[RMDB]
RNA sequence: GGGAACGACUCGAGUAGAGUCGAAAAAAAAAGAUAUGGACCUCCUACCCACCGCUGUUGGGACGAUGAGGAGUUUCGGAAACGAAACUCCGAGUCCUUACAGCGAGGGAGGUCCUAAGUCAAAAAACAGAGGAUACUAGUUCGCUAGUAUCCUCUGAAAAGAAACAACAACAACAAC
Reactivity to DMS in 0.01 (KOAc 150mM, MgCl2 10mM, bicine 150mM(pH8.5), 24C), signal-to-noise 3, nucleotides 027 to 126: a090a090a090a160a070g010a160u000a260u010g000g010a010c020c010u000c000c000u000a120c030c010c020a300c160c010g000c010u000g000u000u000g000g000g000a050c030g000a120u010g000a160g000g010a020g000u000u000u010c000g000g010a110a060a130c010g000a010a010a010c000u000c000c000g000a050g000u000c000c000u000u010a010c000a000g010c000g000a010g040g000g010a000g000g000u020c000c000u000a000a060g020u030c100a000a070a110a130a090a110
The record gives the reactivity of an RNA of 177 nucleotides to DMS. For DMS the reverse transcriptase was MarathonRT.